[RMDB]
RNA sequence: GGGAACGACUCGAGUAGAGUCGAAAAGAUAGCUUCGUGAGAAGCUAUCACAGAAUGGCUUCGGCCAUUCUGACUGGCUCUACGGAGCCAGAAAAUAAAAAAACACAAACUAUAGGCCGUCUACGGACGGCCAGCCACUUCUACGGAAGUGGCACGAAGGCGUACGCGCCUUCGAUUUUCCGGCGGCGCAUGUUCGCGUCGUCGUAAGUCUGGAUUCCCAAGGCCCACUCGGUUCAACUUCGGUUUCCGGACAAAUACAAAGAACAAAACGAACGUUCGCGUUCGUUAAAAGAAACAACAACAACAAC
Reactivity to 2A3 in 0.01 (KOAc 150mM, MgCl2 10mM, bicine 150mM(pH8.5), 24C), signal-to-noise 1, nucleotides 027 to 266: g000a000u000a000g000c030u010u010c050g040u070g050a080g010a030a000g000c000u000a000u000c000a010c000a000g010a000a000u000g000g000c020u110u100c300g160g000c000c000a000u010u000c000u010g000a010c000u000g000g000c010u000c000u030a130c300g060g000a010g000c000c000a000g010a030a120a010a000u100a000a110a070a020a030a060a000c240a000c040a030a170a020c040u140a090u060a120g000g000c010c000g000u000c000u010a010c110g110g040a000c040g090g060c100c000a000g000c000c000a000c010u010u000c000u050a020c150g010g000a000a000g000u000g000g000c000a000c010g010a000a000g010g040c030g000u040a030c270g000c000g010c070c000u000u010c000g000a000u030u080u190u140c140c000g000g000c000g010g010c000g000c020a040u080g000u010u010c010g000c000g000u010c000g000u000c010g010u010a000a000g010u020c030u030g000g010a010u000u000c050c000c000a000a000g000g000c000c000c000a070c170u180c080g030g000u080u050c050a030a030c010u020u010c000g000g000u000u020u000c000c000g000g000a010c010a000a030a000u090a000c100a000a060a000g060a040a020c000a000a070
An RNA of 307 nucleotides, treated with 2A3 and read out base by base.
The data come from the RNA Mapping Database (RMDB), library POS240.